Annotation
The record gives the reactivity of an RNA of 177 nucleotides to DMS and 2A3. 2A3 adducts were read by reverse transcription with SuperScript II with manganese.

RNA sequence: GGGAACGACUCGAGUAGAGUCGAAAACCCAUUUCGUGAAGGAAGUUCUGAGCGAAAUCAGGUGGCCGCAUAUAUUGCGAGCCAGAUAGGGCAGAACGCGCAGUCCGUGCAGACCACGGCAGAGUCGCGUCACUGUAGGAUUCGUCCUACAGUGACGAAAAGAAACAACAACAACAAC
Reactivity to DMS in 0.01 (KOAc 150mM, MgCl2 10mM, bicine 150mM(pH8.5), 24C), signal-to-noise 6, nucleotides 027 to 126: c000c000c010a060u000u020u010c020g020u010g020a280a060g010g030a130a160g010u020u020c010u010g000a300g000c020g010a040a030a040u000c160a120g010g020u010g010g010c010c010g000c010a040u000a140u030a100u040u010g010c010g000a100g020c000c000a010g010a090u010a140g010g000g030c090a050g000a130a080c040g000c050g020c070a070g010u040c020c020g020u010g000c110a170g000a110c260c020a030c000g000g010c030a190g010a060g000u020c040g010
Reactivity to 2A3 in 0.01 (KOAc 150mM, MgCl2 10mM, bicine 150mM(pH8.5), 24C), signal-to-noise 6, nucleotides 027 to 126: c000c000c000a010u020u050u020c030g000u020g070a060a030g070g070a120a170g100u250u120c000u020g040a030g010c010g040a010a000a040u060c030a010g100g160u030g010g020c020c020g000c080a000u180a020u050a100u270u080g020c040g020a050g000c000c000a010g010a040u170a020g050g010g030c020a020g030a190a050c020g000c000g010c050a010g030u020c010c010g000u000g000c030a030g010a160c040c010a010c000g020g000c030a030g010a020g110u120c060g000